[RMDB]
RNA sequence: GGGAACGACUCGAGUAGAGUCGAAAACUGGCCACAAGUUGUUUUAAACAGCUAGAUUGUGCAUUCUACUUUUUCUCAUCUUAUUGCAUCCUAUGGGAAGCACCUCCCUGUGCUACUGUGAUAUCACACUAACUCUAAUGUUCGCAUUAGAGUUAGUAAAAGAAACAACAACAACAAC
Reactivity to 2A3 in 0.01 (KOAc 150mM, MgCl2 10mM, bicine 150mM(pH8.5), 24C), signal-to-noise 9, nucleotides 027 to 126: c010u020g070g010c030c010a040c030a070a040g020u020u020g070u030u100u050u190a140a170a010c000a000g010c010u030a050g030a300u080u100g020u050g030c020a040u050u030c020u070a110c010u060u080u030u060u010c020u010c020a130u020c050u100u130a130u080u120g010c000a020u030c010c010u100a110u140g060g010g020a050a020g010c010a010c000c000u030c010c000c000u020g010u010g030c010u030a070c040u060g030u040g150a070u060a030u230c030a040c000
Reactivity to DMS in 0.01 (KOAc 150mM, MgCl2 10mM, bicine 150mM(pH8.5), 24C), signal-to-noise 9, nucleotides 027 to 126: c060u000g010g010c030c050a090c150a110a070g010u000u000g000u000u000u010u010a060a100a080c060a060g010c020u000a070g010a140u000u000g010u000g020c080a070u000u010c040u010a060c060u000u000u000u000u000c010u000c030a100u000c100u000u010a080u010u000g010c030a070u000c030c030u000a100u010g010g010g010a070a070g010c030a060c050c040u000c010c010c020u000g010u000g000c050u000a050c080u000g010u000g010a110u010a060u000c080a070c130
Source: RMDB library OK2TST, as collected in RNAgym. An RNA of 177 nucleotides, treated with 2A3 and DMS and read out base by base. For 2A3, 23,976 sequencing reads were counted. Conditions: 150 mM KOAc, 10 mM MgCl2 and 150 mM bicine (pH 8.5), 24 C. DMS adducts were read by reverse transcription with MarathonRT.